[RMDB]
RNA sequence: GGGAACGACUCGAGUAGAGUCGAAAACUAUGACAAGGGCAUCUUCGAAUUUCCCUUUGCAGGAACCAGUUGCUGCAGAUUUCCGGGUGUUCGAAACUUUCCCAGGCACUUGGAAUAAGGUUGCAUAUCCAUAAAUUAUCUUCGGAUAAUUUAUGGAAAAAGAAACAACAACAACAAC
Reactivity to 2A3 in 0.01 (KOAc 150mM, MgCl2 10mM, bicine 150mM(pH8.5), 24C), signal-to-noise 2, nucleotides 027 to 126: c020u070a040u220g010a020c030a060a010g060g010g030c000a050u000c070u180u110c060g090a090a050u100u090u240c000c000c000u030u110u010g030c020a010g030g070a080a030c020c000a110g080u150u070g060c010u020g000c000a040g060a250u110u150u110c070c030g000g000g000u010g000u070u080c000g020a020a030a050c050u080u050u000c040c020c010a040g090g000c010a020c000u030u020g020g020a010a020u060a040a010g050g030u050u040g000c040a050u080a110
Reactivity to DMS in 0.01 (KOAc 150mM, MgCl2 10mM, bicine 150mM(pH8.5), 24C), signal-to-noise 4, nucleotides 027 to 126: c080u010a050u000g000a170c080a050a050g000g010g020c300a050u000c060u000u010c020g000a060a050u000u010u000c010c000c010u000u010u010g020c020a030g000g000a050a060c080c120a120g010u000u000g000c000u000g010c020a040g010a160u010u010u000c200c140g000g010g010u000g010u000u000c020g010a030a050a110c190u010u000u000c010c000c010a230g000g000c010a010c010u000u000g010g010a100a040u020a070a090g010g010u000u010g020c060a100u000a150